[RMDB]
RNA sequence: GGGAACGACUCGAGUAGAGUCGAAAAGACGUAAUGCGCGCAAAUCCACAAACGCCAACGAUGAGCGUUUCGCUGUAGCCGCUUAAGGCAACAGCCGGGGCCGCCUGAGCCCUGUUACCAAAGACGGGAAACUCGAUGCCAUUCGUGGCAUCGAGAAAUCGUUAGUGAACUUCGGUUCACUAACGAUAAAAGAAACAACAACAACAAC
Reactivity to 2A3 in 0.01 (KOAc 150mM, MgCl2 10mM, bicine 150mM(pH8.5), 24C), signal-to-noise 2, nucleotides 027 to 156: g050a000c020g010u040a180a050u190g050c050g000c010g010c090a040a070a080u040c050c000a090c070a150a050a010c060g020c050c020a150a140c140g110a160u180g000a040g040c010g020u000u060u080c030g000c000u000g010u020a060g010c010c000g020c150u220u220a110a080g010g000c010a050a000c000a010g010c020c020g000g000g010g000c000c080g080c000c020u020g010a030g010c000c000c000u020g030u040u070a020c030c020a000a020a020g090a010c020g000g010g020a000a040a020c000u010c010g010a010u010g010c010c000a010u030u040c180g050u050g000g000c000a000u000c000g020a000g000a000a000

Chemical mapping of a 207-nucleotide RNA with 2A3. The RNA was probed in 150 mM KOAc, 10 mM MgCl2 and 150 mM bicine (pH 8.5) at 24 C. 2A3 is a SHAPE reagent: it acylates the 2'-hydroxyl of flexible nucleotides of all four kinds. 2A3 adducts were read by reverse transcription with SuperScript II with manganese. Source: RMDB library M2RFPK, as collected in RNAgym.